Conditions: 150 mM KOAc, 10 mM MgCl2 and 150 mM bicine (pH 8.5), 24 C. An RNA of 177 nucleotides, treated with 2A3 and read out base by base. As a SHAPE reagent, 2A3 marks flexible, mostly unpaired nucleotides at the ribose 2'-OH.
RNA sequence: GGGAACGACUCGAGUAGAGUCGAAAAACAAUGACUGGUAGGUAUUUUAUCGUGAGCGCGAUUGCUGCGCGUGAGCCAGUCGUACGCACCACAGAGCUGCUCAGCGGUAACUGUGUUGACCAUGGAGAUCCCCUGCACCCUUCGGGGUGCAGGGGAUAAAAGAAACAACAACAACAAC
Reactivity to 2A3 in 0.01 (KOAc 150mM, MgCl2 10mM, bicine 150mM(pH8.5), 24C), signal-to-noise 1, nucleotides 027 to 126: a000c110a050a050u050g000a000c000u000g000g190u140a020g110g050u020a300u300u250u070u000a070u300c050g020u000g300a190g000c140g000c000g120a190u080u300g000c020u000g110c110g000c000g040u040g000a000g000c050c070a040g000u000c000g000u160a000c000g000c090a020c000c000a000c000a000g000a140g000c000u040g000c140u190c300a070g000c000g040g000u140a040a060c000u000g020u000g020u090u090g000a160c000c120a300u160g000g000a230g000